[RMDB]
About this RNA
An RNA of 177 nucleotides, treated with 2A3 and DMS and read out base by base. The RNA was probed in 150 mM KOAc, 10 mM MgCl2 and 150 mM bicine (pH 8.5) at 24 C.

RNA sequence: GGGAACGACUCGAGUAGAGUCGAAAAGGUGCUGGCGCGUACAAAGCUGAACCGGUCCUCGCGGGUGCUGUUGGCCGGACACCUGGACACCGUGCCAGUGGCCGGCAACCUGCCUAGCCGCCGCGAGCAUGGCAUAUCGUUUCGACGAUAUGCCAUGAAAAGAAACAACAACAACAAC
Reactivity to 2A3 in 0.01 (KOAc 150mM, MgCl2 10mM, bicine 150mM(pH8.5), 24C), signal-to-noise 3, nucleotides 027 to 126: g050g010u070g030c040u050g030g040c050g000c020g100u070a100c110a080a140a020g030c020u040g020a070a020c010c010g000g050u040c000c000u000c010g000c010g000g040g030u110g020c010u020g040u130u060g140g140c000c000g000g000a010c010a030c010c060u020g010g000a070c110a070c120c150g090u300g000c000c000a000g010u020g000g020c000c000g000g030c000a010a020c000c020u030g000c010c000u070a040g010c000c030g040c010c000g020c000g000a010g000
Reactivity to DMS in 0.01 (KOAc 150mM, MgCl2 10mM, bicine 150mM(pH8.5), 24C), signal-to-noise 5, nucleotides 027 to 126: g010g020u000g010c050u000g000g010c050g020c100g020u000a110c200a090a100a120g010c030u000g020a110a130c060c030g000g010u010c090c010u000c030g010c010g010g010g020u000g020c030u010g000u000u000g010g010c000c010g000g000a020c000a010c140c080u000g000g000a020c020a190c240c290g000u000g010c010c010a030g010u000g010g000c010c000g000g000c010a030a010c030c110u000g020c040c100u010a060g000c080c060g000c020c000g000c020g000a040g010